[RMDB]
RNA sequence: GGGAACGACUCGAGUAGAGUCGAAAAGAUGUUCUCAGAUGUUGCUGAGGUCCAGCAUCUCACGACCAGGGUACGUCGUGAUGAGAACAUGAACAGUGAGCAGAUUUGGACCUCAGCAGAUCUGAUAGAGGUACCCUGCUCUAUCGCUCACUGUAGGACGUCGAGCAUUAUUCGUAAUGCUCGACGUAAAAGAAACAACAACAACAAC
Reactivity to 2A3 in 0.01 (KOAc 150mM, MgCl2 10mM, bicine 150mM(pH8.5), 24C), signal-to-noise 2, nucleotides 027 to 156: g070a000u100g030u070u000c000u030c000a020g040a050u170g010u250u150g000c000u000g000a000g010g000u000c000c000a000g020c080a130u020c040u000c050a030c070g030a030c020c030a030g160g050g000u080a040c030g100u020c020g000u020g010a030u140g000a020g040a060a030c020a070u170g090a020a000c000a010g000u000g000a020g000c130a070g010a170u100u160u110g020g000a000c000c010u000c000a000g000c000a000g000a020u000c010u020g010a030u140a020g050a000g000g070u050a080c030c000c010u020g040c000u000c020u060a030u040c050g000c000u000c000a000c000u000g000u040a030g080g080